Structure probing data (DMS and 2A3) for a 177-nucleotide construct. Conditions: 150 mM KOAc, 10 mM MgCl2 and 150 mM bicine (pH 8.5), 24 C.
[RMDB]
RNA sequence: GGGAACGACUCGAGUAGAGUCGAAAAAAACAUUGCGGGAGCAGCUCAAGGGCGAAUUUGUUAAACAACCUGAAGUUUCAAGUCAAUGUGUUUCACGGUUAAAUGAUGACUUUGUGUAUCCAUGCUGGUUAAACGACGCAUUCGUGCGUCGUUUAACAAAAGAAACAACAACAACAAC
Reactivity to DMS in 0.01 (KOAc 150mM, MgCl2 10mM, bicine 150mM(pH8.5), 24C), signal-to-noise 1, nucleotides 027 to 126: a000a020a010c030a100u040u000g020c000g000g010g000a020g000c000a080g040c190u000c050a030a070g030g020g040c300g000a070a040u060u000u010g070u020u020a010a120a040c140a070a110c030c040u020g000a090a010g000u010u020u020c010a000a020g020u050c070a050a020u020g010u000g000u000u000u070c010a070c070g000g000u000u000a010a070a120u020g020a010u020g020a010c010u000u080u050g070u010g020u000a010u000c020c020a160u060g000c100u010g050
Reactivity to 2A3 in 0.01 (KOAc 150mM, MgCl2 10mM, bicine 150mM(pH8.5), 24C), signal-to-noise 1, nucleotides 027 to 126: a040a000a000c180a070u150u060g000c000g090g000g030a000g030c000a010g000c000u000c000a000a000g020g020g010c020g000a030a010u000u000u160g070u170u250a160a090a000c000a000a000c040c000u020g010a010a010g000u000u000u090c100a010a000g050u040c010a010a180u090g040u000g100u000u030u030c110a110c050g020g100u000u070a070a200a130u200g060a030u240g040a000c010u080u120u020g050u000g030u020a000u000c080c000a000u070g000c020u000g010
Background:
2A3 adducts were read by reverse transcription with SuperScript II with manganese. In probing experiments dimethyl sulfate is read out at A N1 and C N3, which are open when not base-paired.